RNA sequence: GGGAACGACUCGAGUAGAGUCGAAAACUGAGAAGAUGGUGGAGGGAGCCGUCAGCAGUGUCUCUGUGCAAGCUGAGCCCUAAUGCAUAGUUGGAGCCCAGUGCGUGGGAAGCACAUUCUUCUGACCACACAGCUUGCCAGACACACAGAGCGCGUAGGUACUCGCACUAUUCGUAGUGCGAGUACCAAAAGAAACAACAACAACAAC
Reactivity to 2A3 in 0.01 (KOAc 150mM, MgCl2 10mM, bicine 150mM(pH8.5), 24C), signal-to-noise 2, nucleotides 027 to 156: c050u060g010a060g020a140a050g010a040u060g000g060u040g000g060a090g000g040g000a000g060c040c020g070u040c060a040g090c040a010g030u010g010u000c000u000c000u060g110u180g000c000a000a000g010c000u040g030a010g000c020c020c020u030a020a020u130g050c090a140u090a170g030u070u070g020g010a060g000c010c000c120a100g010u040g000c150g000u010g020g030g030a030a000g030c090a030c040a250u220u020c040u050u050c000u040g150a050c000c000a040c000a000c000a010g000c000u000u010g060c000c000a000g000a000c000a010c000a000c000a020g050a010g060c080g010c050g070u090a080
Structure probing data (2A3) for a 207-nucleotide construct. Values cover nucleotides 27 to 156. Conditions: 150 mM KOAc, 10 mM MgCl2 and 150 mM bicine (pH 8.5), 24 C. For 2A3, 863 sequencing reads were counted.